[RMDB]
RNA sequence: GGGAACGACUCGAGUAGAGUCGAAAAGAAAGAAAGAUUAUGUGAAGGUAUUCUUGUGUUCUCUAGAUCAGUGCUUUUAGGAAAUUUGUGUGAUCUAAAGAACACAAAGAAUACCUACACAGAACAAUCGAACAGAUGAUUUCGAUCAUCUGUUCGAAAAAGAAACAACAACAACAAC
Reactivity to 2A3 in 0.01 (KOAc 150mM, MgCl2 10mM, bicine 150mM(pH8.5), 24C), signal-to-noise 3, nucleotides 027 to 126: g150a020a110a020g070a090a180a000g080a100u130u100a020u120g020u000g030a060a000g010g000u000a000u030u010c000u000u000g000u000g010u000u000c010u000c000u000a000g000a000u000c020a010g150u050g210c020u060u070u130u260a210g030g210a090a260a110u090u230u070g050u000g010u020g000a010u000c010u000a000a000a000g010a000a000c010a000c000a000a000a000g020a000a000u010a000c000c000u000a000c000a000c020a000g000a010a010c020a010a080
Reactivity to DMS in 0.01 (KOAc 150mM, MgCl2 10mM, bicine 150mM(pH8.5), 24C), signal-to-noise 1, nucleotides 027 to 126: g080a060a010a050g000a050a130a140g040a140u000u060a030u000g000u000g000a160a000g040g030u000a010u000u010c000u000u000g000u000g000u000u050c000u000c100u010a000g030a000u000c000a010g000u010g000c050u000u000u020u000a200g010g030a140a100a070u000u020u000g030u000g080u000g000a000u030c000u000a000a000a010g000a000a000c000a000c000a000a000a040g000a020a000u000a000c000c000u000a000c000a000c000a000g020a030a060c160a160a270